The record gives the reactivity of an RNA of 177 nucleotides to DMS and 2A3. For 2A3, 2,263 sequencing reads were counted. The DMS profile rests on 2,302 reads. Conditions: 150 mM KOAc, 10 mM MgCl2 and 150 mM bicine (pH 8.5), 24 C.
[RMDB]
RNA sequence: GGGAACGACUCGAGUAGAGUCGAAAAGUUUGUGUCUUUCACGCGGUGUAUCAACCGCAUUAAUUCGGAAAGCAAACUUCCUGAUUAUCGGCACCAUAAUGAUACCUACUGCAAAGCUAAUCAAUAAAGCUAAUGGACUAUUCGUAGUCCAUUAGCUAAAAGAAACAACAACAACAAC
Reactivity to DMS in 0.01 (KOAc 150mM, MgCl2 10mM, bicine 150mM(pH8.5), 24C), signal-to-noise 3, nucleotides 027 to 126: g000u010u000u010g010u000g010u010c080u000u000u000c040a160c210g010c010g010g010u000g000u000a090u000c240a140a050c000c000g040c030a050u010u000a050a160u000u010c300g000g000a010a000a080g000c030a020a020a040c010u000u000c010c000u010g010a080u000u000a040u000c070g000g000c010a030c050c020a050u000a050a080u000g000a060u010a060c130c040u000a110c100u000g010c080a060a050a070g020c050u010a100a090u000c070a060a070u010a100a070
Reactivity to 2A3 in 0.01 (KOAc 150mM, MgCl2 10mM, bicine 150mM(pH8.5), 24C), signal-to-noise 2, nucleotides 027 to 126: g000u010u030u020g060u020g050u050c040u010u060u030c060a060c060g000c000g000g000u040g020u040a150u190c070a060a030c000c020g000c020a010u020u150a030a100u140u150c050g040g030a020a060a030g000c020a020a000a040c000u050u030c000c010u070g030a100u000u070a040u100c040g000g010c010a010c010c020a020u050a150a030u130g030a020u040a060c000c010u060a080c020u040g010c030a030a090a090g020c020u070a020a100u130c020a030a090u130a160a120

The data come from the RNA Mapping Database (RMDB), library OK2TST.